[RMDB]
RNA sequence: GGGAACGACUCGAGUAGAGUCGAAAACGCGCCGACUGGCUCGCACCACUGCCCCCGCCUGGUGGGGUGCUUUUCGAGGACUGCGCGGCGCGAGUGGCGCCCGCCGCUCAAGGCGACUUGCCCCGCCCAGGCUUGGAUGGUUCGCCAUCCAAGCCUGAAAAGAAACAACAACAACAAC
Reactivity to 2A3 in 0.01 (KOAc 150mM, MgCl2 10mM, bicine 150mM(pH8.5), 24C), signal-to-noise 3, nucleotides 027 to 126: c020g020c000g020c010c000g000a030c030u030g030g010c030u020c010g000c010a070c030c010a220c090u100g020c010c000c000c010c090g080c060c100u080g030g000u040g020g010g000g070u030g010c010u090u140u060u070c040g070a100g040g060a220c070u060g010c060g000c010g190g000c010g000c000g010a010g010u100g030g020c010g020c020c020c000g010c010c010g010c010u080c120a060a000g030g000c010g030a040c030u060u110g030c010c000c000c030g010c010c020
Reactivity to DMS in 0.01 (KOAc 150mM, MgCl2 10mM, bicine 150mM(pH8.5), 24C), signal-to-noise 1, nucleotides 027 to 126: c170g000c010g020c000c000g000a000c000u050g000g000c050u020c090g020c160a100c110c010a110c110u000g030c020c030c000c080c040g000c110c000u030g070g000u000g000g000g030g030u040g040c060u010u020u010u000c000g030a130g000g000a250c040u000g000c170g000c000g020g000c000g060c040g010a080g000u000g000g040c070g000c190c000c030g000c040c000g040c010u000c110a050a110g010g050c000g040a020c010u040u000g000c010c000c140c000g100c010c070
Description: An RNA of 177 nucleotides, treated with 2A3 and DMS and read out base by base. Conditions: 150 mM KOAc, 10 mM MgCl2 and 150 mM bicine (pH 8.5), 24 C. The 2A3 profile rests on 1,968 reads. Source: RMDB library OK1LIB, as collected in RNAgym.